[RMDB]
RNA sequence: GGGAACGACUCGAGUAGAGUCGAAAAGUAAACGAUGUCUGCUAGGUGUGGCACAGGCUACGAGCCUGUGCUGUGCCGUAGGGAAGCCGUGAAGCAGACCGCCUGGGAAGUACGUCCGCAAGGAUGAGGUCAUAUCAAGGUUCGCCUUGAUAUGACCAAAAGAAACAACAACAACAAC
Reactivity to 2A3 in 0.01 (KOAc 150mM, MgCl2 10mM, bicine 150mM(pH8.5), 24C), signal-to-noise 3, nucleotides 027 to 126: g110u110a030a090a100c050g010a040u140g000u000c000u010g010c000u000a020g000g000u020g000u020g010g000c000a000c000a000g000g000c000u080a050c300g050a040g000c000c000u000g010u000g000c000u000g000u000g000c000c000g000u010a000g010g010g070a110a040g190c010c010g040u070g070a030a000g020c000a000g010a000c000c000g010c000c010u060g000g010g010a070a020g040u160a060c020g020u000c000c000g040c080a050a030g010g000a020u070g050a030
Reactivity to DMS in 0.01 (KOAc 150mM, MgCl2 10mM, bicine 150mM(pH8.5), 24C), signal-to-noise 2, nucleotides 027 to 126: g020u050a100a040a270c110g030a110u030g000u000c010u000g000c010u020a210g000g020u010g000u000g000g030c000a020c010a000g000g040c010u010a130c230g000a220g040c000c000u000g020u010g010c000u000g000u000g000c020c000g000u010a030g000g000g000a110a180g020c010c010g000u000g030a030a120g020c010a020g020a020c000c000g000c020c010u000g010g000g000a110a050g020u010a110c060g020u000c000c010g020c180a060a090g000g000a000u000g000a080
The record gives the reactivity of an RNA of 177 nucleotides to 2A3 and DMS. The reactions ran in a buffer of 150 mM KOAc, 10 mM MgCl2 and 150 mM bicine (pH 8.5), at 24 C. Reactivities are given for positions 27 through 126. For 2A3, 2,690 sequencing reads were counted.